Overview: Structure probing data (DMS and 2A3) for a 177-nucleotide construct. Values are in units of 0.01, from 0 to 300, in steps of 10. It was measured as part of the RMDB libraries RFM100 and RFMREP. For DMS the reverse transcriptase was MarathonRT. For 2A3 the reverse transcriptase was SuperScript II with manganese.
RNA sequence: GGGAACGACUCGAGUAGAGUCGAAAACCUUGUGCUGUUCCAUUGGCCUACAAAUCUGGUACUGGAUUUUUACCCAUGGUGAUUUCUACCACCUUACUACUGAUGAAGACACCAUUCCAGCGGACCAGCCAGUAGGGAAAUUCGUUUCCCUACUGGCAAAAGAAACAACAACAACAAC
Reactivity to DMS in 0.01 (KOAc 150mM, MgCl2 10mM, bicine 150mM(pH8.5), 24C), signal-to-noise 2, nucleotides 027 to 126: c020c020u040u010g010u000g010c010u010g000u010u000c030c050a090u010u000g000g030c090c100u020a090c170a050a080a040u000c070u010g000g030u000a080c110u000g010g010a050u020u030u030u010u000a120c120c000c010a090u010g020g000u000g000a090u000u000u000c070u000a120c050c020a010c020c070u010u010a070c130u010a060c080u000g000a090u000g010a060a060g000a060c010a010c010c030a060u000u010c010c010a080g010c140g000g000a080c030c040a040
Reactivity to 2A3 in 0.01 (KOAc 150mM, MgCl2 10mM, bicine 150mM(pH8.5), 24C), signal-to-noise 4, nucleotides 027 to 126: c020c000u030u070g060u040g040c040u070g020u070u060c020c010a040u050u090g030g000c000c000u090a100c080a020a090a020u050c050u060g030g010u070a070c030u070g050g070a070u070u020u010u080u110a090c030c030c020a060u050g000g020u050g020a180u030u020u060c020u040a090c010c010a060c010c040u070u110a090c030u030a030c020u050g060a100u050g060a120a040g050a020c000a010c000c000a020u060u010c000c000a000g070c010g050g020a030c000c000a000